[RMDB]
RNA sequence: GGGAACGACUCGAGUAGAGUCGAAAAUGGGGACAGAUACAGCCUGAGGCAGGACGGGACUAAAUGUGAGCUGCAGAUUCGUGGCCUGGCCAUGGCAGACACUGGGGAGUACUCGUGCGUGUGCGGGUCUAGCUUAUAGCUUCGGCUAUAAGCUAGAAAAAGAAACAACAACAACAAC
Reactivity to DMS in 0.01 (KOAc 150mM, MgCl2 10mM, bicine 150mM(pH8.5), 24C), signal-to-noise 5, nucleotides 027 to 126: u010g000g000g010g020a100c110a040g000a100u010a090c150a140g000c040c030u010g010a110g000g020c050a060g010g010a070c070g010g000g010a060c090u000a060a060a070u010g010u000g000a120g010c030u000g000c030a120g000a190u000u010c070g050u000g010g010c010c060u010g030g010c010c020a050u000g000g000c020a030g000a070c060a020c030u010g010g000g000g000a100g020u000a070c040u000c020g020u000g010c070g010u000g010u010g000c030g000g000g010
Reactivity to 2A3 in 0.01 (KOAc 150mM, MgCl2 10mM, bicine 150mM(pH8.5), 24C), signal-to-noise 3, nucleotides 027 to 126: u090g000g000g000g020a000c030a030g050a070u090a160c030a030g050c000c020u070g030a090g060g020c030a010g020g050a030c010g030g000g000a020c060u080a040a070a070u150g010u010g010a090g070c010u010g000c040a050g030a270u130u190c030g020u040g030g000c020c180u060g090g000c000c010a020u030g090g020c000a010g000a020c000a000c040u020g020g010g020g000a050g020u050a130c010u010c030g010u030g050c040g050u100g030u050g030c010g010g020g000